[RMDB]
RNA sequence: GGGAACGACUCGAGUAGAGUCGAAAAAAAGUUAGCGUACUAGAGUCGCCGUGAGUACGCUAUGGUUCCGUGAGACUCUACACGAGCGUAUCACGGAACCCACGUACAUACCGUACGUGCUAUAAAAAUACAGACAUCAGUUCGCUGAUGUCUGUAUAAAAGAAACAACAACAACAAC
Reactivity to 2A3 in 0.01 (KOAc 150mM, MgCl2 10mM, bicine 150mM(pH8.5), 24C), signal-to-noise 3, nucleotides 027 to 126: a000a000a000g050u030u010a000g000c000g000u000a000c010u020a030g080a100g150u090c070g050c100c010g100u100g050a000g010u000a000c000g010c000u000a000u040g010g000u000u000c000c000g000u000g000a000g030a010c020u000c040u120a140c210a050c220g020a000g000c090g030u090a050u110c000a000c000g000g000a000a000c000c000c000a010c000g010u020a000c000a040u110a160c060c100g000u000a000c000g010u000g000c010u040a050u120a110a090a020a000
Reactivity to DMS in 0.01 (KOAc 150mM, MgCl2 10mM, bicine 150mM(pH8.5), 24C), signal-to-noise 4, nucleotides 027 to 126: a040a040a060g000u010u000a000g010c000g010u000a000c000u000a150g000a120g010u000c040g010c060c030g010u010g020a040g010u000a010c000g000c000u010a000u000g010g000u010u000c000c000g000u000g000a050g000a080c000u000c000u000a120c240a130c210g000a020g020c100g010u010a130u000c000a000c000g000g000a010a000c010c000c010a000c010g020u000a000c000a060u000a060c180c120g010u000a010c000g010u000g000c080u000a090u010a010a050a050a070
Structure probing data (2A3 and DMS) for a 177-nucleotide construct.
For DMS, 4,876 sequencing reads were counted.
DMS adducts were read by reverse transcription with MarathonRT.
The data come from the RNA Mapping Database (RMDB), library M2PK90.
Reactivities are given for positions 27 through 126.